[RMDB]
RNA sequence: GGGAACGACUCGAGUAGAGUCGAAAAGUUACGAGAGCGUGAUGCAGCCGAUCCUGGAGCCUUUCGUGCCUCCGCGCUAUCACGCACCGUCUGAGGGGAGAAAUAGCAUAAAGUACAGUCAGCUGCCCAGAAAGACGGAGUUCGCUCCGUCUUUCUGAAAAGAAACAACAACAACAAC
Reactivity to 2A3 in 0.01 (KOAc 150mM, MgCl2 10mM, bicine 150mM(pH8.5), 24C), signal-to-noise 1, nucleotides 027 to 126: g050u050u070a020c050g030a010g020a000g180c040g000u030g020a000u060g060c010a010g050c020c030g000a080u130c070c050u080g020g020a020g000c010c010u090u230u160c090g070u100g020c000c050u010c010c010g000c000g020c020u030a030u050c000a020c040g020c000a020c010c000g070u060c060u060g090a080g000g070g000g010a070g000a010a080a030u120a010g000c000a000u100a110a120a000g060u080a120c030a000g080u050c030a030g060c020u020g020c000c000
Reactivity to DMS in 0.01 (KOAc 150mM, MgCl2 10mM, bicine 150mM(pH8.5), 24C), signal-to-noise 2, nucleotides 027 to 126: g000u010u030a070c060g000a120g010a050g030c040g030u000g000a060u000g000c090a130g020c040c060g000a060u000c080c090u010g020g000a050g040c050c050u000u000u010c150g020u010g020c230c030u000c020c040g010c050g000c080u010a040u010c010a040c020g000c010a070c070c040g000u000c090u000g020a130g020g000g030g000a060g000a060a020a050u010a080g000c050a080u010a050a070a090g000u000a040c110a070g000u000c080a070g020c060u000g000c020c080
Structure probing data (2A3 and DMS) for a 177-nucleotide construct. For DMS, 1,778 sequencing reads were counted. The 2A3 profile rests on 1,085 reads. It was measured as part of the RMDB library OK2TST.